[RMDB]
RNA sequence: GGGAACGACUCGAGUAGAGUCGAAAAGGCCCCGUGGGGGUUGGAGUGUACGUAGGAUGCGAGCCAAUCCUUGAAGGACCGUUGGCGUGCACCUUGGGGGCUGAGGUUAGCUGCCACAUGACCAGCAAGGGAUCAUAUUCUUCGGAAUAUGAUCCCUAAAAGAAACAACAACAACAAC
Reactivity to DMS in 0.01 (KOAc 150mM, MgCl2 10mM, bicine 150mM(pH8.5), 24C), signal-to-noise 3, nucleotides 027 to 126: g000g010c020c000c010c010g070u040g000g010g000g060g020u000u010g020g000a160g010u040g010u010a020c070g040u020a090g030g030a060u020g000c020g000a110g000c050c040a070a010u010c020c000u000u070g020a220a120g000g000a130c100c080g020u000u010g000g000c050g000u010g000c110a060c000c010u010u000g000g000g000g010g000c010u010g020a070g010g010u000u020a100g020c030u020g010c000c020a120c120a150u000g000a080c070c040a090g020c180a120
Reactivity to 2A3 in 0.01 (KOAc 150mM, MgCl2 10mM, bicine 150mM(pH8.5), 24C), signal-to-noise 2, nucleotides 027 to 126: g010g010c000c020c000c010g030u120g010g050g010g000g030u000u030g000g030a050g000u100g020u030a040c040g030u070a110g100g160a150u130g000c030g020a010g000c000c000a080a050u110c010c050u000u140g160a130a040g040g040a030c000c070g050u050u000g030g010c030g020u030g020c040a090c040c010u040u030g000g000g020g000g060c030u030g000a000g020g020u030u110a050g000c000u020g000c000c000a040c040a090u120g100a140c000c000a020g000c080a080
Chemical mapping of a 177-nucleotide RNA with DMS and 2A3. For 2A3, 968 sequencing reads were counted. The DMS profile rests on 3,777 reads. It was measured as part of the RMDB library OK1LIB. DMS adducts were read by reverse transcription with MarathonRT.